RNA sequence: GGGAACGACUCGAGUAGAGUCGAAAAGGGAAUCCUGCCCUAAGCAAACGGUGUGUACUAAAGGGAGCACAUUGUUGAGAAGGACCGGUUGCAAAUUUCCAAAAAGGAGAGUAAAAUAAUUAAUGAGAUAGAUAGAUAGGUUCGCCUAUCUAUCUAUAAAAGAAACAACAACAACAAC
Reactivity to DMS in 0.01 (KOAc 150mM, MgCl2 10mM, bicine 150mM(pH8.5), 24C), signal-to-noise 9, nucleotides 027 to 126: g010g000g020a100a060u010c010c020u000g010c020c000c010u000a090a130g010c060a060a020a030c010g000g010u000g010u010g000u000a100c080u020a090a090a120g010g010g000a300g010c020a020c030a060u020u010g010u020u010g000a120g020a160a090g010g000a050c020c040g000g000u000u010g020c050a060a070a130u010u000u000c010c020a030a070a060a080a070g000g000a050g010a090g010u020a060a050a080a080u020a070a060u030u020a060a080u020g010a090g000
Reactivity to 2A3 in 0.01 (KOAc 150mM, MgCl2 10mM, bicine 150mM(pH8.5), 24C), signal-to-noise 9, nucleotides 027 to 126: g040g020g020a020a110u060c000c010u030g040c000c020c010u070a140a040g050c040a060a020a000c010g020g000u030g000u010g010u050a050c050u240a120a140a150g130g020g030a090g040c010a000c000a040u050u100g050u050u070g040a070g040a060a030g040g020a020c010c030g030g000u050u040g010c010a030a070a080u040u040u000c020c000a050a070a030a030a060g120g010a070g030a010g070u150a040a140a060a130u190a050a100u270u120a060a110u170g030a060g030
Background: The record gives the reactivity of an RNA of 177 nucleotides to DMS and 2A3. The 2A3 profile rests on 8,635 reads. The RNA was probed in 150 mM KOAc, 10 mM MgCl2 and 150 mM bicine (pH 8.5) at 24 C. Source: RMDB library OK1LIB, as collected in RNAgym.